RNA sequence: GGGAACGACUCGAGUAGAGUCGAAAAGAUAUGGAUGAUUAUCCAGCGAGGAUCUGGGAUCGGAAACGAUCCCAGGGAGCUGUGAUACUGUCAUCCUAAGUCAAAGACGUAGGUUCGCCUACGUCAACUAUUAUACGAGCUUCGGCUCGUAUAAUAGAAAAGAAACAACAACAACAAC
Reactivity to DMS in 0.01 (KOAc 150mM, MgCl2 10mM, bicine 150mM(pH8.5), 24C), signal-to-noise 5, nucleotides 027 to 126: g010a010u000a130u000g010g010a010u000g010a120u010u010a040u000c000c010a020g010c000g020a080g020g000a010u010c000u000g010g010g010a010u000c000g030g020a040a020a070c010g010a020u000c000c000c000a000g000g000g000a010g050c010u000g020u020g010a010u000a050c300u010g020u000c010a000u000c000c000u010a020a110g000u000c020a130a130a150g010a010c000g020u000a000g000g010u010u010c300g040c000c000u000a000c000g010u000c000a030a120
Reactivity to 2A3 in 0.01 (KOAc 150mM, MgCl2 10mM, bicine 150mM(pH8.5), 24C), signal-to-noise 3, nucleotides 027 to 126: g020a000u030a020u080g000g000a000u000g010a000u030u180a000u070c000c000a000g000c010g020a300g020g000a000u000c000u000g010g000g000a010u010c000g010g000a000a010a000c000g000a000u000c020c000c000a010g010g000g000a000g000c010u020g130u280g110a010u050a120c110u120g100u150c000a000u000c000c000u000a040a000g020u020c040a080a060a190g000a000c000g010u000a010g030g060u050u080c300g150c070c000u000a000c000g010u000c000a010a000
Chemical mapping of a 177-nucleotide RNA with DMS and 2A3. The reactions ran in a buffer of 150 mM KOAc, 10 mM MgCl2 and 150 mM bicine (pH 8.5), at 24 C. The data come from the RNA Mapping Database (RMDB), library TTRDES. Reactivities are given for positions 27 through 126. For 2A3, 10,457 sequencing reads were counted. The DMS profile rests on 7,674 reads.